[RMDB]
RNA sequence: GGGAACGACUCGAGUAGAGUCGAAAACGCGCAUGCGCUAGUACCUCAGGCCGGCCCAGGCCUGGAUCGCGAUGGCGCGUACAGCGCUCAGGCCGUGGCCGAGGCGCACGAUCGUGGCCGGUACGUGCGUUCUGGAUCGGUUCGCCGAUCCAGAACGAAAAGAAACAACAACAACAAC
Reactivity to 2A3 in 0.01 (KOAc 150mM, MgCl2 10mM, bicine 150mM(pH8.5), 24C), signal-to-noise 2, nucleotides 027 to 126: c020g000c010g050c050a090u150g010c010g000c040u010a020g020u070a130c000c010u080c090a080g000g030c000c000g030g060c090c000c060a020g010g000c000c010u040g020g040a130u130c030g020c010g070a090u110g230g040c020g000c000g050u020a040c030a010g000c020g000c030u040c030a000g000g000c010c040g110u130g100g040c030c000g020a030g000g040c020g070c000a000c020g030a040u120c060g150u130g060g050c030c060g000g010u110a070c010g050u060g050
Reactivity to DMS in 0.01 (KOAc 150mM, MgCl2 10mM, bicine 150mM(pH8.5), 24C), signal-to-noise 2, nucleotides 027 to 126: c060g010c020g060c060a070u010g000c040g030c040u000a030g040u000a030c040c040u000c040a070g010g030c000c000g040g000c030c040c120a250g000g000c030c010u000g000g000a030u010c020g020c040g010a170u000g040g010c010g000c020g010u000a100c090a030g010c000g010c050u000c040a140g010g040c030c010g010u000g010g010c000c020g000a120g020g000c050g000c010a120c060g000a070u000c070g060u000g010g000c050c020g020g000u010a050c040g040u010g000
Chemical mapping of a 177-nucleotide RNA with 2A3 and DMS. The data come from the RNA Mapping Database (RMDB), library OK2TRN. Values cover nucleotides 27 to 126. The 2A3 profile rests on 1,692 reads. DMS adducts were read by reverse transcription with MarathonRT.